Chemical mapping of a 207-nucleotide RNA with DMS and 2A3.
RNA sequence: GGGAACGACUCGAGUAGAGUCGAAAAGAGACAGAGUUCACUACAUGUGGGUAUGGUAUUUAGAUUCCUCUAUUGGAAUGCAGGUUCCUUGAAGCUCAAGGAUAUUGUGAUGCACAGGUGCUCUGACCCAGGAACACAGCCUGGCCUGCCUAUCAGACUGAGCCUUUUAGUUCGCUAAAAGGCUCAGAAAAGAAACAACAACAACAAC
Reactivity to DMS in 0.01 (KOAc 150mM, MgCl2 10mM, bicine 150mM(pH8.5), 24C), signal-to-noise 1, nucleotides 027 to 156: g020a060g000a120c090a110g000a120g030u000u000c060a070c060u020a070c070a140u000g030u020g000g020g020u000a070u000g030g010u010a060u010u000u020a080g020a120u020u000c000c020u010c160u020a200u010u010g020g000a120a020u000g020c070a010g020g010u000u000c020c020u000u000g020a080a150g000c210u000c020a020a090g000g020a020u000a000u020u000g010u000g020a150u000g010c030a060c000a120g020g020u000g070c010u000c010u000g000a090c050c000c020a300g070g040a070a030c090a120c060a080g020c070c030u010g040g010c020c000u000g000c000c010u000a140u000c060a130g020a150
Reactivity to 2A3 in 0.01 (KOAc 150mM, MgCl2 10mM, bicine 150mM(pH8.5), 24C), signal-to-noise 2, nucleotides 027 to 156: g110a000g030a020c030a040g060a020g110u100u160c120a050c110u110a100c120a180u200g010u050g030g000g030u040a040u090g000g000u060a140u010u200u100a160g020a090u070u070c020c010u050c130u120a160u080u190g040g000a060a000u040g050c010a020g030g040u100u050c000c010u040u080g050a110a020g010c030u030c040a000a000g030g000a000u010a050u160u090g070u100g010a060u050g040c070a030c030a050g080g010u090g010c060u030c000u000g020a060c030c000c000a000g010g000a080a070c050a010c030a060g040c000c000u020g000g000c000c000u010g000c010c010u120a110u120c030a000g030a060
Reactivities are given for positions 27 through 156.